RNA sequence: GGGAACGACUCGAGUAGAGUCGAAAAGGGAGCGAGUUCGCUCGCUCCCAAACGCGAUGAAGCGGCACUUACGGAGCUUCAUACAUCUAAGAAGUGCAAUAAAAAGCGGUAGCUUCGGCUACCGCAAGUAGUGGACAAAGUUCGCUUUGUCCACUACAAAAGAAACAACAACAACAAC
Reactivity to DMS in 0.01 (KOAc 150mM, MgCl2 10mM, bicine 150mM(pH8.5), 24C), signal-to-noise 1, nucleotides 027 to 126: g000g000g010a010g010c000g040a000g000u060u020c300g000c000u040c000g010c000u000c000c000c000a000a000a050c140g000c070g000a040u000g000a020a010g020c030g070g000c020a060c020u010u000a300c170g020g010a220g000c070u000u000c020a030u010a070c070a050u000c050u000a080a100g010a020a020g000u010g000c020a130a070u020a060a030a030a240a130g000c010g000g020u000a010g040c020u000u040c190g050g000c010u000a000c000c000g000c000a000a000
Reactivity to 2A3 in 0.01 (KOAc 150mM, MgCl2 10mM, bicine 150mM(pH8.5), 24C), signal-to-noise 2, nucleotides 027 to 126: g010g020g010a000g000c000g000a000g000u030u050c050g080c090u000c000g030c020u030c000c000c000a000a000a000c010g030c040g030a060u100g060a070a030g020c010g040g000c030a010c060u060u090a040c080g070g030a030g000c010u020u020c030a020u080a090c050a100u050c030u100a060a010g040a100a020g040u020g020c020a030a020u150a240a120a010a030a030g000c000g000g000u000a010g000c010u050u020c170g020g000c000u010a010c000c000g000c000a000a000
Chemical mapping of a 177-nucleotide RNA with DMS and 2A3. Reactivities are given for positions 27 through 126. The 2A3 profile rests on 1,574 reads. 2A3 adducts were read by reverse transcription with SuperScript II with manganese. Reactivities are rounded to 0.1 and cut off at 0 and 3. For DMS, 928 sequencing reads were counted. For DMS the reverse transcriptase was MarathonRT.